[RMDB]
RNA sequence: GGGAACGACUCGAGUAGAGUCGAAAAGAUAUGGACCCUUGAGAACCGAUUCUAGACGACGAAGUCGGAAACGACAGAGUCUUCUAUCGGACAAGGGUCCUAAGUCAAAGGUUCGUUCGCGAACCAACCUUUUUGUUAAGUUCGCUUAACAAAAAGGAAAAGAAACAACAACAACAAC
Reactivity to DMS in 0.01 (KOAc 150mM, MgCl2 10mM, bicine 150mM(pH8.5), 24C), signal-to-noise 5, nucleotides 027 to 126: g010a030u010a300u000g010g000a010c000c000c000u000u000g000a160g000a110a110c000c000g010a030u000u000c110u000a010g010a010c040g000a110c140g000a230a180g000u010c010g000g010a100a060a170c000g000a020c000a040g000a300g000u000c000u000u000c020u010a010u010c010g030g000a130c020a010a010g000g000g000u000c000c010u000a010a030g000u010c030a100a120a110g000g010u000u010c000g000u000u010c180g030c020g000a020a010c000c010a050a080
Reactivity to 2A3 in 0.01 (KOAc 150mM, MgCl2 10mM, bicine 150mM(pH8.5), 24C), signal-to-noise 4, nucleotides 027 to 126: g010a010u070a050u120g000g000a010c000c010c040u010u030g140a210g090a270a120c020c000g000a010u140u110c090u200a010g010a030c040g000a020c010g020a070a010g000u000c000g020g040a090a070a010c010g000a000c010a010g030a000g030u000c000u000u000c000u010a010u020c000g020g030a040c000a000a000g000g000g000u000c000c000u000a010a000g010u010c010a030a040a060g010g000u000u010c010g000u020u110c300g010c020g140a010a000c000c000a030a070
Structure probing data (DMS and 2A3) for a 177-nucleotide construct. DMS adducts were read by reverse transcription with MarathonRT. Reactivities are rounded to 0.1 and cut off at 0 and 3. Values cover nucleotides 27 to 126. It was measured as part of the RMDB library TTRDEL.